[RMDB]
RNA sequence: GGGAACGACUCGAGUAGAGUCGAAAAGCGGACGGACUAGUACUUGUACUACAGAAUUAACUGCCGUGUGCCGCCCGCUAAACUAGCCCCAAUCAUCGAAAAUGGAGAAACCGACAGUGCACGUUGACUCAGCUGAUCUGUUCGCAGAUCAGCUGAGAAAAGAAACAACAACAACAAC
Reactivity to 2A3 in 0.01 (KOAc 150mM, MgCl2 10mM, bicine 150mM(pH8.5), 24C), signal-to-noise 1, nucleotides 027 to 126: g000c000g000g000a000c000g010g000a000c000u000a000g000u000a000c000u050u290g140u080a000c000u000a050c000a000g000a000a000u300u090a100a010c000u030g230c240c110g160u080g150u070g210c010c050g000c000c000c000g000c000u000a000a000a150c020u010a020g000c000c000c000c080a000a220u050c000a000u000c030g060a010a020a020a020u000g070g000a100g070a220a100a080c120c000g000a000c000a000g050u060g050c000a030c210g070u230u160g000a000